Structure probing data (2A3 and DMS) for a 207-nucleotide construct.
The 2A3 profile rests on 3,248 reads.
For DMS, 1,913 sequencing reads were counted.
It was measured as part of the RMDB library RNAMAK.
RNA sequence: GGGAACGACUCGAGUAGAGUCGAAAACCGUAGGGAGAGAACUACUUAGCGCGCACCAUCGAUCAUUUCUUCGAAAGAGGAAAUGGGAGGUGCUGAAUGCUAAGCUCUCCCUAAACGGAAAGCCUUCUGUAUGUGGUUCGCCACAUACAGAAGGCAACCAUGCUUUCAUGUUCGCAUGAAAGCAUGGAAAAGAAACAACAACAACAAC
Reactivity to 2A3 in 0.01 (KOAc 150mM, MgCl2 10mM, bicine 150mM(pH8.5), 24C), signal-to-noise 3, nucleotides 027 to 156: c000c000g000u010a010g000g010g000a010g000a010g010a090a040c110u170a020c000u290u000a000g010c020g000c020g010c040a010c020c000a270u300c020g040a020u040c000a000u020u000u000c000u000u010c000g060a100a060a070g000a000g010g000a000a000a000u010g000g000g000a030g000g000u000g030c000u020g000a060a010u170g000c020u020a000a010g000c020u040c000u000c000c000c000u000a000a010a010c010g000g060a160a030a010g010c010c000u010u000c000u000g000u000a000u000g000u010g000g060u060u100c280g080c090c010a000c000a000u000a000c000a000g010a000a000g000g010c000a000a000
Reactivity to DMS in 0.01 (KOAc 150mM, MgCl2 10mM, bicine 150mM(pH8.5), 24C), signal-to-noise 1, nucleotides 027 to 156: c000c000g080u010a000g020g020g020a030g000a110g020a160a180c060u020a300c000u000u000a010g000c000g010c220g010c000a060c030c000a070u000c100g020a300u010c000a010u000u000u000c000u010u000c030g000a150a100a300g000a040g000g050a000a000a020u000g000g000g000a300g040g000u000g000c000u000g020a060a070u010g050c010u000a020a000g000c010u000c010u000c000c000c000u000a000a010a040c000g040g000a100a080a220g000c040c000u040u000c000u000g000u010a000u020g000u000g040g000u000u020c200g060c020c020a030c000a020u000a000c010a000g000a030a000g060g020c000a000a020